An RNA of 177 nucleotides, treated with DMS and 2A3 and read out base by base. The RNA was probed in 150 mM KOAc, 10 mM MgCl2 and 150 mM bicine (pH 8.5) at 24 C. DMS adducts were read by reverse transcription with MarathonRT. 2A3 adducts were read by reverse transcription with SuperScript II with manganese. The data come from the RNA Mapping Database (RMDB), library TTRDEL.
RNA sequence: GGGAACGACUCGAGUAGAGUCGAAAAGAUAUGGACAGUGAUGACCACUAUCCCGAAGAACUCGGAAACGAGGGAGGGAUGGUGCAAGCUGUCCUAAGUCGCAAAGAAACUGGUUCGCCAGUUUCAACGUUGAGUAGAUGUUCGCAUCUACUCAACGAAAAGAAACAACAACAACAAC
Reactivity to DMS in 0.01 (KOAc 150mM, MgCl2 10mM, bicine 150mM(pH8.5), 24C), signal-to-noise 4, nucleotides 027 to 126: g010a040u000a300u010g000g020a010c020a030g000u000g010a120u010g000a150c300c020a020c010u000a020u000c010c010c020g020a110a140g010a150a250c000u000c000g000g020a140a080a170c010g020a010g030g000g010a120g000g010g010a000u000g020g010u000g000c050a100a120g010c010u000g010u000c000c010u000a000a050g010u000c020g020c200a100a140a150g010a010a010a010c000u000g010g000u000u030c290g030c000c000a020g000u000u000u000c000a090a120
Reactivity to 2A3 in 0.01 (KOAc 150mM, MgCl2 10mM, bicine 150mM(pH8.5), 24C), signal-to-noise 2, nucleotides 027 to 126: g030a010u070a030u110g000g010a010c010a000g000u040g190a300u160g050a120c040c030a000c000u010a010u010c000c000c000g060a220a050g010a030a010c010u000c010g000g090a050a060a060c000g000a010g010g000g010a020g000g000g000a000u010g000g000u020g000c000a090a090g000c000u000g000u000c000c000u000a000a010g010u000c010g060c130a090a160a130g000a000a010a000c010u000g000g090u070u090c300g050c070c010a000g000u010u010u000c010a020a010